[RMDB]
RNA sequence: GGGAACGACUCGAGUAGAGUCGAAAAGCAGGUGUUGGGGGGUGGCACGUCUCAGGCUUUGGGGUCUUCCUGUUCUCUUUCUUGGCCCUGCUCCACUCCUUGGUUCCCCUGGCCCUGUCUUGCCUGCGUCUACAGUCAGAUUCGUCUGACUGUAGACAAAAGAAACAACAACAACAAC
Reactivity to DMS in 0.01 (KOAc 150mM, MgCl2 10mM, bicine 150mM(pH8.5), 24C), signal-to-noise 2, nucleotides 027 to 126: g010c020a030g000g020u020g020u000u010g010g000g000g020g050g040u000g000g000c160a070c110g010u000c060u000c100a080g010g010c070u010u010u010g010g010g000g010u000c020u010u000c020c020u000g010u000u010c050u000c030u000u010u000c070u010u000g000g010c040c010c020u000g000c110u000c030c030a060c060u000c030c020u010u010g010g010u000u000c000c010c010c040u000g010g000c010c020c020u000g000u000c040u000u000g010c020c000u010g000c190
Reactivity to 2A3 in 0.01 (KOAc 150mM, MgCl2 10mM, bicine 150mM(pH8.5), 24C), signal-to-noise 2, nucleotides 027 to 126: g000c000a010g020g000u200g030u220u040g030g010g010g000g030g020u040g020g050c030a020c110g050u050c020u020c080a040g060g050c060u080u170u250g020g000g010g000u020c020u040u030c010c030u050g060u130u030c050u000c000u050u170u010c030u020u030g020g010c010c000c000u000g010c030u030c020c000a050c020u010c040c020u050u100g080g000u020u050c000c000c010c020u020g030g000c000c000c000u020g050u110c020u030u060g020c010c000u010g040c070

The record gives the reactivity of an RNA of 177 nucleotides to DMS and 2A3. Reactivities are given for positions 27 through 126. Conditions: 150 mM KOAc, 10 mM MgCl2 and 150 mM bicine (pH 8.5), 24 C. For DMS the reverse transcriptase was MarathonRT. 2A3 adducts were read by reverse transcription with SuperScript II with manganese.